[RMDB]
RNA sequence: GGGAACGACUCGAGUAGAGUCGAAAAUCCAAGAUCAGCUUCCAAUUCUUUAUAAAUAUUCAUUAAUGAAGGUGGAAUUUUUACGCCUGGCUGAACAGAAAAACUUAAUCCAUGUGCCUGAUUUGGACGAUUAAUUUAAUUUCGAUUAAAUUAAUCGAAAAGAAACAACAACAACAAC
Reactivity to DMS in 0.01 (KOAc 150mM, MgCl2 10mM, bicine 150mM(pH8.5), 24C), signal-to-noise 1, nucleotides 027 to 126: u020c030c000a090a070g020a090u000c050a030g050c150u000u000c050c000a080a150u010u020c010u020u000u000a070u000a150a060a220u000a250u030u020c040a050u010u000a060a090u000g000a000a010g010g010u000g010g040a030a030u010u000u010u020u050a050c070g000c050c020u000g000g000c040u010g000a030a070c140a180g010a070a040a090a070a080c120u000u010a110a090u000c010c070a020u000g010u010g030c040c030u000g010a070u000u000u000g000g010a170
Reactivity to 2A3 in 0.01 (KOAc 150mM, MgCl2 10mM, bicine 150mM(pH8.5), 24C), signal-to-noise 2, nucleotides 027 to 126: u000c000c000a020a020g030a190u020c010a000g010c020u050u030c030c000a090a060u180u070c050u110u300u110a240u160a240a210a110u290a240u240u300c020a050u090u270a170a120u100g010a030a000g050g000u060g020g050a060a000u150u060u050u250u080a040c140g010c000c020u020g010g020c010u070g020a020a030c000a050g210a030a150a030a030a000c060u100u070a020a000u070c030c010a040u030g040u070g090c000c000u090g050a180u000u050u040g000g010a000